[RMDB]
RNA sequence: GGGAACGACUCGAGUAGAGUCGAAAACAUUGUCAUUGUACUAAAGAGGCUACUUGCUACAAUAGUGUUACUCAUGCAUACUAUUGUUUCAAACAUGCAUUGGGAUGUGAUUAUCUGUAUAACCCUUUUGUUAUAGAUAUACAACAAUGGGGUUACAAUCUCCAAAAGGGUUCGCCCUUUUGGAGAUAAAAGAAACAACAACAACAAC
Reactivity to DMS in 0.01 (KOAc 150mM, MgCl2 10mM, bicine 150mM(pH8.5), 24C), signal-to-noise 2, nucleotides 027 to 156: c030a110u010u000g020u010c010a150u000u000g000u000a110c050u010a060a150a110g010a180g050g020c050u000a050c060u000u000g010c000u000a040c000a050a020u010a030g020u010g000u000u010a110c120u010c140a150u020g000c100a100u000a020c020u000a020u000u000g000u030u010u010c010a040a050a060c050a050u000g000c020a080u000u000g020g020g010a100u000g030u010g010a130u000u010a040u010c030u040g030u000a080u000a020a030c020c000c000u010u000u000u000g000u000u010a070u010a040g010a220u000a140u000a040c010a010a030c010a010a030u010g010g010g030g030u000u000a010c050a040
Reactivity to 2A3 in 0.01 (KOAc 150mM, MgCl2 10mM, bicine 150mM(pH8.5), 24C), signal-to-noise 4, nucleotides 027 to 156: c040a050u070u090g050u040c040a050u020u120g030u080a030c060u150a150a050a010g110a050g050g010c020u050a030c020u070u060g000c010u020a010c020a010a050u010a020g020u020g040u100u070a070c040u060c090a050u190g040c010a040u050a080c020u040a020u030u010g020u010u080u090c070a070a100a060c050a040u070g020c010a020u050u080g030g010g030a060u060g040u020g070a060u030u190a050u130c060u030g050u080a070u060a080a020c010c010c000u010u000u010u000g010u020u010a030u020a050g030a080u100a030u070a290c050a040a000c000a000a010u000g000g000g020g000u020u000a010c000a000
About this RNA
Structure probing data (DMS and 2A3) for a 207-nucleotide construct. For 2A3, 2,446 sequencing reads were counted. DMS adducts were read by reverse transcription with MarathonRT. Values cover nucleotides 27 to 156.